[RMDB]
RNA sequence: GGGAACGACUCGAGUAGAGUCGAAAAGGGGUCUCACACUGCGAAGGAUGUUGGUGAGCGAGGAUCUAUACUGAAGCCUCCACGGUAUAGGGAGCUCACCACCAUCUGGAGUGUGAGACGGAGGCACCCAAAACCCGAACAGUUCGCUGUUCGGGAAGGUUAUAGCCUGAUUCGUCAGGCUAUAACCAAAAGAAACAACAACAACAAC
Reactivity to 2A3 in 0.01 (KOAc 150mM, MgCl2 10mM, bicine 150mM(pH8.5), 24C), signal-to-noise 2, nucleotides 027 to 156: g040g000g020g020u010c020u020c000a010c000a000c010u240g150c090g150a300a160g040g000a000u010g000u010u000g000g000u010g000a000g000c000g020a280g000g000a000u010c010u010a000u000a000c010u020g030a130a040g020c000c000u010c000c000a000c020g020g000u000a000u000a000g000g000g000a000g000c000u010c010a000c000c000a010c010c000a000u000c000u020g010g060a010g000u000g010u000g000a050g000a000c010g010g000a000g000g000c000a050c020c010c010a020a150a070a090c000c010c000g000a000a000c010a010g150u230u240c250g030c180u010g000u000u000c000g000g000g000a010a050